This 177-nucleotide RNA was probed chemically with DMS and 2A3. For DMS, 1,773 sequencing reads were counted. 2A3 adducts were read by reverse transcription with SuperScript II with manganese. The data come from the RNA Mapping Database (RMDB), library OK1LIB. The RNA was probed in 150 mM KOAc, 10 mM MgCl2 and 150 mM bicine (pH 8.5) at 24 C.
RNA sequence: GGGAACGACUCGAGUAGAGUCGAAAAAGGAUAACCCUAAAAGUAGGGGGGCAACCAGUGACCUUUCUGGUGGAUACGGGAGCCCAGCACUCGGUACUGACUCGACCAGAUGGACCUCUCAGUGACCGACAUGGCAUGGUUUCGACCAUGCCAUGUCAAAAGAAACAACAACAACAAC
Reactivity to DMS in 0.01 (KOAc 150mM, MgCl2 10mM, bicine 150mM(pH8.5), 24C), signal-to-noise 1, nucleotides 027 to 126: a130g000g070a080u040a000a030c000c000c000u010a090a040a050a110g040u000a020g020g040g000g000g000g000c050a060a050c010c010a080g010u000g000a130c020c040u000u010u000c120u080g000g000u000g030g040a160u020a080c120g000g000g020a110g000c000c090c080a040g050c060a030c060u000c040g010g000u020a010c100u000g010a050c200u000c110g030a080c010c060a040g010a090u020g000g000a060c020c010u010c060u000c000a060g000u010g000a120c040c040
Reactivity to 2A3 in 0.01 (KOAc 150mM, MgCl2 10mM, bicine 150mM(pH8.5), 24C), signal-to-noise 3, nucleotides 027 to 126: a000g190g000a110u080a120a120c000c000c000u080a080a150a020a000g150u130a060g000g000g010g000g030g010c080a060a030c000c000a050g020u020g190a080c030c000u090u100u080c020u060g010g000u040g000g020a030u110a120c060g010g010g020a020g020c000c000c020a050g020c000a030c030u040c060g030g010u060a080c020u120g070a050c030u010c040g100a070c070c000a000g010a080u120g030g060a060c010c000u000c000u010c020a020g030u050g080a050c000c030